[RMDB]
RNA sequence: GGGAACGACUCGAGUAGAGUCGAAAAGUCUAGCGAUUUAGGGAUCCGAUCCGGGUGGCAGAACUCAACUGCAUGAGUAAACACGCAAGUCGCGUAUUGGCCGACCGUCCAAGGAUCUGCUAGACGAGCACUGGUGAUAGUUCGCUAUCACCAGUGCAAAAGAAACAACAACAACAAC
Reactivity to 2A3 in 0.01 (KOAc 150mM, MgCl2 10mM, bicine 150mM(pH8.5), 24C), signal-to-noise 1, nucleotides 027 to 126: g000u020c010u020a000g020c040g110a210u080u080u290a180g050g120g000a020u000c010c010g010a020u010c030c000g000g030g010u070g000g000c000a000g050a060a030c000u010c010a030a110c090u210g050c100a120u000g010a000g000u000a100a090a000c050a010c010g020c000a100a060g300u290c110g040c010g040u000a040u000u150g090g010c030c000g030a030c000c000g050u010c020c030a070a020g000g000a000u000c010u010g010c000u000a000g010a000c000g000a000
Reactivity to DMS in 0.01 (KOAc 150mM, MgCl2 10mM, bicine 150mM(pH8.5), 24C), signal-to-noise 1, nucleotides 027 to 126: g020u000c010u000a010g010c010g020a110u000u000u020a120g000g010g010a000u000c000c030g020a250u000c130c010g020g000g110u000g000g000c020a090g020a220a010c020u010c000a000a080c120u050g000c190a100u000g020a100g010u000a210a070a050c120a010c010g040c000a100a070g030u010c130g040c050g020u000a070u000u010g070g040c000c020g010a060c000c000g070u000c170c090a070a300g030g000a010u000c000u000g040c020u000a000g000a010c000g000a020